[RMDB]
RNA sequence: GGGAACGACUCGAGUAGAGUCGAAAACGCAGAGGGUUCUGAUAACAAAGAACCUAGAUAGCCGCAUCGGUAUUAUAGGAUGUAGUCGGUGAGCCGGAAUGCGUGCAUCGUAAGCCUAUAAGUAAAUUUAAGUGUAAUCACUUCGGUGAUUACACAAUCAUACACAACAGUUCGCUGUUGUGUAUGAAAAAGAAACAACAACAACAAC
Reactivity to 2A3 in 0.01 (KOAc 150mM, MgCl2 10mM, bicine 150mM(pH8.5), 24C), signal-to-noise 3, nucleotides 027 to 156: c050g000c040a030g060a110g100g000g000u020u000c010u030g050a080u130a180a030c020a010a160a010g010a020a010c000c000u010a000g010a050u050a010g030c020c020g060c060a070u090c060g030g010u070a080u250u070a070u100a060g070g010a050u060g080u110a040g110u070c050g030g000u040g040a030g020c030c020g040g060a090a030u060g000c020g040u070g020c010a010u010c010g070u080a030a020g010c000c010u050a060u040a170a020g090u110a050a160a230u160u250u140a130a020g000u000g000u000a000a000u000c000a000c030u020u030c190g040g000u010g000a000u000u000a000c000a000c000a000a000
Reactivity to DMS in 0.01 (KOAc 150mM, MgCl2 10mM, bicine 150mM(pH8.5), 24C), signal-to-noise 2, nucleotides 027 to 156: c050g010c060a120g030a210g000g010g020u000u000c000u010g030a160u000a090a180c300a130a220a090g000a010a050c010c000u000a080g010a080u000a130g020c000c060g020c060a030u000c060g010g000u000a090u000u000a020u000a070g000g010a090u010g050u000a090g030u000c000g020g010u000g010a070g000c020c020g040g020a100a160u000g010c020g010u000g000c040a010u000c010g030u000a080a130g000c040c000u000a050u010a020a030g000u010a070a100a130u000u000u000a060a150g030u010g000u000a010a000u000c000a000c000u020u000c300g040g050u010g000a020u000u000a000c000a000c030a030a050
Chemical mapping of a 207-nucleotide RNA with 2A3 and DMS. The DMS profile rests on 3,388 reads. The RNA was probed in 150 mM KOAc, 10 mM MgCl2 and 150 mM bicine (pH 8.5) at 24 C. Source: RMDB library M2RFPK, as collected in RNAgym.